[RMDB]
RNA sequence: GGGAACGACUCGAGUAGAGUCGAAAAUACGCAGAUGGUCAAUUUUAGUGUUAAUUUUUCUAAUUCGUUCAAUCAAAUUAACACCUAAUUUACCGAUUUCGUCGGGCGAAUAGUAGGUUGCAAAGGUGCGAUUACCUGGAUCAAUGGCACAGAUACCGACAGAUCGAACAUUCGUGUUCGAUCUGUCAAAAGAAACAACAACAACAAC
Reactivity to 2A3 in 0.01 (KOAc 150mM, MgCl2 10mM, bicine 150mM(pH8.5), 24C), signal-to-noise 1, nucleotides 027 to 156: u190a020c050g000c010a010g060a170u080g060g010u020c020a000a000u000u000u030u190a000g030u000g030u050u030a020a020u050u030u050u140u000c080u190a120a140u180u060c070g080u190u110c060a010a120u070c030a040a160a000u000u010a020a020c000a010c000c000u000a010a010u010u010u060a020c010c000g140a100u000u090u120c030g020u000c030g000g030g020c000g000a020a000u030a100g110u010a010g050g030u040u100g030c030a240a000a000g020g000u040g020c040g010a010u050u090a070c010c000u060g020g000a010u090c030a000a060u050g050g000c020a000c000a030g080a050u090a100c050c000